[RMDB]
RNA sequence: GGGAACGACUCGAGUAGAGUCGAAAAGCCAUAUUGAGAAAUGCAUUAAUUAUGGCGUAUGCCGUGUCCCAAUAUUCUUCUAUGAUAGGACAAUUUACUGAGUCUGGAAAUACAGAAGAAUCCAGAGACAAUCGUCCCUGUUCGCAGGGACGAUUGUAAAAGAAACAACAACAACAAC
Reactivity to DMS in 0.01 (KOAc 150mM, MgCl2 10mM, bicine 150mM(pH8.5), 24C), signal-to-noise 2, nucleotides 027 to 126: g030c030c030a030u000a000u000u020g000a040g010a080a270a060u000g030c170a120u000u020a000a080u030u100a010u000g000g000c040g000u000a080u030g000c100c090g000u030g000u000c000c000c000a110a000u050a090u000u000c000u000u070c000u000a040u000g030a140u000a130g030g000a030c080a070a190u020u030u030a180c110u000g000a300g000u000c000u000g000g000a030a000a080u000a090c200a010g000a000a040g060a060a000u000c300c110a150g000a130g030
Reactivity to 2A3 in 0.01 (KOAc 150mM, MgCl2 10mM, bicine 150mM(pH8.5), 24C), signal-to-noise 2, nucleotides 027 to 126: g000c020c000a010u020a020u020u020g120a020g010a120a150a180u180g010c070a080u000u290a070a020u000u110a080u010g070g000c000g000u020a140u050g140c000c080g080u160g000u000c020c020c000a000a000u300a020u000u000c000u020u030c000u000a030u190g050a020u030a220g000g000a000c080a100a200u200u040u100a190c150u140g050a040g030u020c000u000g090g070a020a030a030u030a080c000a080g000a010a000g000a000a000u060c120c070a010g060a020g010

Description:
Conditions: 150 mM KOAc, 10 mM MgCl2 and 150 mM bicine (pH 8.5), 24 C. The record gives the reactivity of an RNA of 177 nucleotides to DMS and 2A3. For DMS, 1,145 sequencing reads were counted. For 2A3 the reverse transcriptase was SuperScript II with manganese. It was measured as part of the RMDB library OK1LIB.